[RMDB]
RNA sequence: GGGAACGACUCGAGUAGAGUCGAAAAUGGCCUUGAGUGUCGUUAUUAUGGAGGAGUGUGGCAUGCCUCAAUGGCUUAUUCGUACUGUACCAUUUGGUUUAGAUCAGCAAGUGAUUUGUCAAGCCCCCUAACUAUACAAGUUCGCUUGUAUAGUUAGAAAAGAAACAACAACAACAAC
Reactivity to 2A3 in 0.01 (KOAc 150mM, MgCl2 10mM, bicine 150mM(pH8.5), 24C), signal-to-noise 9, nucleotides 027 to 126: u080g040g020c010c000u040u080g060a040g050u120g030u050c030g050u060u070a100u160u070a090u160g090g020a070g050g010a050g030u070g010u040g050g000c040a020u070g030c000c010u040c010a050a080u130g010g000c000u050u070a070u070u090c030g020u040a050c020u050g030u070a040c010c020a060u030u030u100g090g010u040u070u120a060g010a100u060c030a000g040c010a050a080g060u030g070a100u030u070u090g050u040c030a070a060g050c010c000c000c000
Reactivity to DMS in 0.01 (KOAc 150mM, MgCl2 10mM, bicine 150mM(pH8.5), 24C), signal-to-noise 9, nucleotides 027 to 126: u010g010g010c030c020u000u010g010a100g020u010g010u000c080g020u000u010a070u010u000a090u000g010g020a080g010g000a070g010u000g010u000g000g010c090a070u000g010c050c020u000c120a050a070u010g010g010c030u000u000a100u000u000c080g010u000a060c080u000g010u000a060c040c020a090u000u000u000g010g010u000u000u000a080g010a070u000c070a050g010c090a060a070g010u000g000a080u000u000u000g010u000c070a080a120g000c040c010c020c140